RNA sequence: GGGAACGACUCGAGUAGAGUCGAAAAGUGCCUCGUCGGCCCGGCAUGCCAACCUGAUCCGAAGUUCAAGGUGGUUUCUCUGGCCUUCCAGAGAGAUGCGCGUCAGAAGAACCGACGAACAAACCUUAAAACAAAACGACGUUCGCGUCGUUUUGAAUCAUUGAGAAAAGUUCGCUUUUCUCAAUGAAAAAGAAACAACAACAACAAC
Reactivity to 2A3 in 0.01 (KOAc 150mM, MgCl2 10mM, bicine 150mM(pH8.5), 24C), signal-to-noise 5, nucleotides 027 to 156: g050u030g060c000c010u020c000g020u000c010g010g030c050c040c010g030g010c010a030u090g000c010c010a090a150c040c020u030g010a030u060c050c120g250a210a070g050u080u040c050a070a020g020g010u010g020g000u030u140u000c000u000c000u010g030g000c030c030u230u120c010c000a000g010a000g000a010g000a050u050g010c210g020c030g110u120c100a090g040a190a010g020a070a060c010c010g010a010c020g020a050a010c040a030a050a040c000c040u180u240a050a090a030a050c010a000a000a000a000c000g010a010c000g010u020u090c210g010c000g090u000c000g000u000u000u000u010g000a000a010
Reactivity to DMS in 0.01 (KOAc 150mM, MgCl2 10mM, bicine 150mM(pH8.5), 24C), signal-to-noise 3, nucleotides 027 to 156: g010u000g020c070c050u000c010g020u000c020g000g040c010c030c020g020g060c040a090u010g060c000c020a040a030c020c000u020g000a060u000c090c100g020a150a160g000u000u000c030a080a060g020g020u000g000g010u000u000u000c000u010c000u000g000g000c190c160u000u000c010c000a050g000a040g000a060g000a060u000g000c020g020c030g040u000c040a150g010a130a120g000a110a070c030c010g000a050c000g000a020a100c060a060a090a130c090c020u000u000a050a090a110a210c020a020a010a020a020c000g020a030c010g060u000u000c290g050c050g010u000c000g020u000u000u000u000g000a130a170